[RMDB]
RNA sequence: GGGAACGACUCGAGUAGAGUCGAAAAUGCACAGCAAAGCCAUGGGUGACAAGGGUGCUGGCGUGCGUGCUGGGAGCCGUGUCAUUCCUGAUCGUGUGGAGCGAGGCCACCAUCGCAUCAGGGACCACUAAGUCCAUUUUUUCGAAAAUGGACUUAGAAAAGAAACAACAACAACAAC
Reactivity to 2A3 in 0.01 (KOAc 150mM, MgCl2 10mM, bicine 150mM(pH8.5), 24C), signal-to-noise 5, nucleotides 027 to 126: u090g010c020a020c050a100g030c020a040a060a040g020c030c030a030u080g040g000g040u070g040a060c040a080a050g060g020g010u090g060c020u010g030g000c020g020u110g060c060g050u130g010c010u010g020g020g030a030g050c020c020g030u050g020u030c040a070u090u110c010c000u010g000a040u040c030g020u010g010u020g110g020a050g040c080g030a100g100g060c000c010a030c020c020a050u110c020g020c030a000u020c010a010g020g010g020a020c010c000a050
Reactivity to DMS in 0.01 (KOAc 150mM, MgCl2 10mM, bicine 150mM(pH8.5), 24C), signal-to-noise 8, nucleotides 027 to 126: u010g010c030a060c040a080g010c060a080a090a110g010c030c040a060u010g010g010g010u000g000a050c090a080a080g010g000g020u010g010c050u000g010g010c050g030u010g020c120g020u010g000c040u000g000g000g000a080g010c050c050g010u000g010u000c070a160u000u000c010c010u000g000a020u000c050g020u010g020u000g000g000a120g010c120g010a080g000g000c020c020a090c020c090a070u000c060g010c130a020u010c020a030g010g000g000a060c090c080a220
Source: RMDB library OK2TRN, as collected in RNAgym. The record gives the reactivity of an RNA of 177 nucleotides to 2A3 and DMS. Conditions: 150 mM KOAc, 10 mM MgCl2 and 150 mM bicine (pH 8.5), 24 C. For 2A3, 12,307 sequencing reads were counted. For DMS, 14,348 sequencing reads were counted. DMS adducts were read by reverse transcription with MarathonRT.